[RMDB]
RNA sequence: GGGAACGACUCGAGUAGAGUCGAAAAGAUAUGGAGCUGUGAGCGACUGUCGCGUUGAAAUCGGAAACGAUGGAGCGACAGCGAACGCUCCAGCUCCUAAGUCAAAAGCCCUUCUUCGGAAGGGCAAGAUUUUGCUUAUGUUCGCAUAAGCAAAAUCAAAAGAAACAACAACAACAAC
Reactivity to DMS in 0.01 (KOAc 150mM, MgCl2 10mM, bicine 150mM(pH8.5), 24C), signal-to-noise 4, nucleotides 027 to 126: g020a030u000a300u000g010g000a000g000c000u010g000u030g000a010g020c000g010a170c010u000g010u000c000g020c000g000u000u020g000a060a090a040u000c000g010g000a130a100a200c000g000a020u000g000g000a150g020c000g010a010c010a010g000c080g010a090a130c010g000c000u000c000c000a010g010c000u000c000c000u010a000a050g010u010c040a080a070a130a200g010c000c000c010u000u000c000u000u020c190g010g000a020a010g000g010g020c000a000a010
Reactivity to 2A3 in 0.01 (KOAc 150mM, MgCl2 10mM, bicine 150mM(pH8.5), 24C), signal-to-noise 2, nucleotides 027 to 126: g030a010u080a040u170g010g000a000g000c010u020g080u250g230a010g000c030g190a260c040u000g010u000c000g010c010g210u300u050g020a040a030a010u000c020g000g040a060a020a030c010g000a020u020g000g000a020g020c000g000a000c010a000g000c020g030a050a000c020g000c000u000c000c000a000g010c000u000c000c000u010a000a000g010u000c020a000a020a070a000g000c000c000c000u000u000c020u010u050c230g140g010a000a000g010g000g030c000a000a000
Source: RMDB library TTRDEL, as collected in RNAgym. This 177-nucleotide RNA was probed chemically with DMS and 2A3. The DMS profile rests on 3,898 reads. DMS adducts were read by reverse transcription with MarathonRT. 2A3 is a SHAPE reagent: it acylates the 2'-hydroxyl of flexible nucleotides of all four kinds.